RNA sequence: GGGAACGACUCGAGUAGAGUCGAAAAGUCGGUCGAUUGUUUUUGCAAUUCCAACGAAUGGCAAUUGAAAUACUCAACUACAAGAACCAAACUGAUCAAGUUGCUGGAUAAAGAUUACACCAUUGUGGUGUUUGUUAACUAUCUGUUAACCGACAAGCCUAAUUCCAAGGUUCGCCUUGGAAUUAGGAAAAGAAACAACAACAACAAC
Reactivity to DMS in 0.01 (KOAc 150mM, MgCl2 10mM, bicine 150mM(pH8.5), 24C), signal-to-noise 1, nucleotides 027 to 156: g010u000c020g030g010u040c020g030a090u000u000g000u000u000u000u000u000g000c000a100a190u010u010c020c020a130a190c070g060a150a120u000g020g030c080a110a100u000u000g010a100a090a030u000a060c060u000c070a100a120c000u020a070c060a020a060g000a070a000c030c020a070a050a080c020u000g000a080u010c030a070a280g000u020u010g000c010u010g000g010a110u000a060a090a080g000a090u000u000a040c010a000c000c000a280u010u000g030u000g040g020u000g010u000u000u000g000u000u010a020a010c050u010a090u010c190u000g020u000u000a030a010c010c010g020a040c040a060a170g000
Reactivity to 2A3 in 0.01 (KOAc 150mM, MgCl2 10mM, bicine 150mM(pH8.5), 24C), signal-to-noise 2, nucleotides 027 to 156: g010u000c000g030g000u000c000g030a030u020u060g100u000u100u020u140u230g010c000a020a000u070u000c000c030a070a050c120g070a130a010u030g000g020c020a020a020u020u040g030a090a010a010u080a060c030u010c030a020a030c020u120a080c060a070a120g040a110a050c050c000a120a070a090c080u140g040a150u040c030a030a060g020u060u000g080c190u030g070g000a040u140a080a230a020g030a000u040u110a010c010a010c060c030a040u030u040g020u090g060g010u020g090u010u030u000g000u000u000a020a000c020u010a020u050c020u030g100u170u150a020a000c000c000g000a020c030a030a000g010